[RMDB]
RNA sequence: GGGAACGACUCGAGUAGAGUCGAAAAGAGAUGCUGAGGCCAGAAUUUUUGAGUGACAGGCGAGUCCCGCAUCAUCAUGUCCACGCCGAAUAUGAUAUCGGCUUUGAUGGCUUCAUGAAUAGCCACACUUGUGGUCGAUGUUCGCAUCGACCACAAGAAAAGAAACAACAACAACAAC
Reactivity to DMS in 0.01 (KOAc 150mM, MgCl2 10mM, bicine 150mM(pH8.5), 24C), signal-to-noise 1, nucleotides 027 to 126: g030a170g040a030u010g000c030u000g000a080g000g000c030c010a090g000a040a090u000u000u090u090u060g020a090g020u040g010a050c220a020g000g020c080g000a040g000u000c020c060c090g000c170a140u000c110a040u000c090a010u010g000u000c050c100a030c190g000c000c020g060a040a080u000a200u020g050a090u000a040u000c000g060g000c000u000u010u040g010a170u000g000g000c060u000u010c060a020u030g000a120a060u000a170g000c000c000a010c120a130
Reactivity to 2A3 in 0.01 (KOAc 150mM, MgCl2 10mM, bicine 150mM(pH8.5), 24C), signal-to-noise 2, nucleotides 027 to 126: g110a010g000a010u020g020c000u070g020a070g010g010c010c030a010g140a200a120u200u220u150u150u270g170a170g000u090g010a010c050a070g060g010c010g040a000g080u030c040c000c050g040c000a030u020c000a000u020c000a010u070g040u020c000c000a130c110g040c040c000g020a010a010u180a100u300g020a000u080a090u160c060g000g000c000u000u220u030g000a000u000g000g000c000u040u010c010a010u210g130a090a090u030a140g000c030c000a010c000a000
Structure probing data (DMS and 2A3) for a 177-nucleotide construct.
The DMS profile rests on 1,201 reads.
The data come from the RNA Mapping Database (RMDB), library OK1LIB.
For 2A3, 826 sequencing reads were counted.
Values cover nucleotides 27 to 126.
The reactions ran in a buffer of 150 mM KOAc, 10 mM MgCl2 and 150 mM bicine (pH 8.5), at 24 C.
For DMS the reverse transcriptase was MarathonRT.